[RMDB]
RNA sequence: GGGAACGACUCGAGUAGAGUCGAAAACUCGAAAGAGACCUGCAUAUCUUAGGCAGAUGAACAAGUCUCGUCUGAAAAGCGAAAGCCCUAAGAUAUGCAGCUGUGACGACUUGCCGCAGAAAAUAAACGUAUAGUAUCGAUUCGUCGAUACUAUACGAAAAGAAACAACAACAACAAC
Reactivity to DMS in 0.01 (KOAc 150mM, MgCl2 10mM, bicine 150mM(pH8.5), 24C), signal-to-noise 8, nucleotides 027 to 126: c000u010c010g000a090a120a120g000a030g000a130c270c010u000g000c010a000u000a010u000c000u000u000a010g000g010c020a010g010a010u000g010a020a130c050a030a050g010u010c040u000c020g010u000c000u010g000a120a080a100a130g010c010g010a090a080a130g000c020c000c010u010a020a000g000a010u000a000u000g000c000a020g010c030u000g010u000g000a110c110g000a030c050u000u010g010c300c020g000c030a050g000a140a070a060a090u050a060a080a150
Reactivity to 2A3 in 0.01 (KOAc 150mM, MgCl2 10mM, bicine 150mM(pH8.5), 24C), signal-to-noise 9, nucleotides 027 to 126: c010u010c010g030a020a040a010g080a010g060a120c010c000u000g000c000a000u000a000u000c000u000u000a000g000g000c000a000g000a010u010g000a030a020c020a030a020g030u010c010u000c020g050u000c020u010g110a240a200a090a020g010c020g050a090a020a010g010c000c000c000u000a000a000g000a000u000a000u000g000c000a000g000c000u020g010u020g020a040c070g010a010c010u020u040g020c030c010g000c030a010g120a040a090a030a050u300a050a100a020